[RMDB]
RNA sequence: GGGAACGACUCGAGUAGAGUCGAAAACAUGUAACUGUAGCUCUCAUUUAUGUAAUAGUUUAGCCCGUCCUCUACAGUGUACCAUAUCUCAUUAAUGAUUGGUAUAUUCUUGAUACCGUUUAACGGGGUGCGUUAAGAGAUUCGUCUCUUAACGCACAAAAGAAACAACAACAACAAC
Reactivity to DMS in 0.01 (KOAc 150mM, MgCl2 10mM, bicine 150mM(pH8.5), 24C), signal-to-noise 3, nucleotides 027 to 126: c140a060u000g020u010a090a070c000u000g020u000a050g000c100u000c050u000c030a070u000u000u000a040u010g010u010a070a100u010a080g010u000u010u000a080g010c020c000c010g020u000c050c050u010c040u000a040c100a070g030u010g000u000a030c010c010a050u000a020u000c010u010c180a130u010u010a100a070u000g000a020u000u000g020g000u000a030u000a040u000u010c080u010u000g000a180u000a110c000c010g000u000u020u000a060a060c030g030g010g010
Reactivity to 2A3 in 0.01 (KOAc 150mM, MgCl2 10mM, bicine 150mM(pH8.5), 24C), signal-to-noise 4, nucleotides 027 to 126: c060a030u110g060u080a060a040c030u020g020u050a020g030c000u010c010u000c060a080u030u110u130a170u140g090u100a070a100u050a190g090u040u070u110a010g010c010c010c000g010u050c010c020u040c010u030a060c040a030g000u010g030u050a010c000c000a040u010a040u250c060u020c050a180u150u200a190a100u150g030a030u070u000g000g000u010a010u000a010u030u040c030u010u060g090a080u090a200c000c050g010u080u060u220a120a040c010g000g000g050